[RMDB]
RNA sequence: GGGAACGACUCGAGUAGAGUCGAAAAUUAGCCCAGACUUAUGAGAGUUUAGUCACCUCUCAGCCCCUCCACCUUGGGGUGCCCUAUCCGAGGCACAGCAGUUUCGGUAGAAAGGCUAAGCAUCUCGACUGUAAGUUACGUUCGCGUAACUUACAGUAAAAGAAACAACAACAACAAC
Reactivity to 2A3 in 0.01 (KOAc 150mM, MgCl2 10mM, bicine 150mM(pH8.5), 24C), signal-to-noise 1, nucleotides 027 to 126: u050u020a030g080c010c020c000a040g070a060c040u090u090a050u080g010a010g010a010g040u000u060u100a070g050u060c020a020c000c000u000c000u010c010a010g010c000c000c000c010u020c030c020a120c040c020u050u070g010g000g010g000u000g040c000c000c000u010a000u000c010c000g010a000g020g000c040a030c040a080g150c010a000g030u000u030u000c010g020g020u020a000g030a020a060a000g010g000c040u030a020a030g030c010a130u010c020u030c100g050
Reactivity to DMS in 0.01 (KOAc 150mM, MgCl2 10mM, bicine 150mM(pH8.5), 24C), signal-to-noise 3, nucleotides 027 to 126: u000u010a140g020c030c000c010a130g000a120c070u000u000a020u000g010a010g000a020g000u000u000u000a140g010u000c190a200c300c000u000c000u000c000a090g000c000c000c000c000u000c200c130a120c170c130u030u000g000g000g000g020u000g000c000c040c010u000a130u010c010c030g000a030g000g020c010a050c190a120g000c200a170g010u000u000u000c010g010g000u020a040g010a080a080a090g000g010c050u010a040a070g000c090a100u010c060u000c080g000